[RMDB]
RNA sequence: GGGAACGACUCGAGUAGAGUCGAAAAGUGCCGAUUGAAAUUCAUGGGAGCCUCUCCAUAAUGGAUGAACGCCGCGAUAGUGCGCGCAGUCGCGACGUAAACGCUCUGUUUUCCCGUUCAGGCCUCACGAUACGCUACUAUUCGUAGUAGCGUAUCGAAAAGAAACAACAACAACAAC
Reactivity to 2A3 in 0.01 (KOAc 150mM, MgCl2 10mM, bicine 150mM(pH8.5), 24C), signal-to-noise 3, nucleotides 027 to 126: g080u050g040c010c000g080a110u100u230g110a130a120a090u180u100c060a060u110g100g000g000a030g010c010c010u090c010u010c020c010a040u190a240a060u240g030g010a010u090g020a050a000c010g020c010c010g030c010g020a020u040a060g190u120g070c070g000c010g010c030a000g040u040c010g000c010g010a010c000g010u020a050a140a000c020g010c000u010c000u040g030u030u000u050u030c000c000c020g000u040u050c020a020g030g040c010c010u030c000a070
Reactivity to DMS in 0.01 (KOAc 150mM, MgCl2 10mM, bicine 150mM(pH8.5), 24C), signal-to-noise 4, nucleotides 027 to 126: g010u000g020c050c010g020a170u000u010g010a110a100a060u000u000c060a060u010g010g000g000a060g010c080c050u000c060u000c010c020a120u010a120a080u010g000g000a040u010g010a090a060c000g000c010c000g000c020g010a010u000a100g000u010g010c030g010c030g010c030a210g000u000c020g010c010g020a030c010g010u000a040a070a090c170g000c000u000c020u000g000u000u000u000u000c000c000c020g000u010u000c080a100g000g010c020c100u000c100a140
Chemical mapping of a 177-nucleotide RNA with 2A3 and DMS. Values are in units of 0.01, from 0 to 300, in steps of 10. The 2A3 profile rests on 3,153 reads.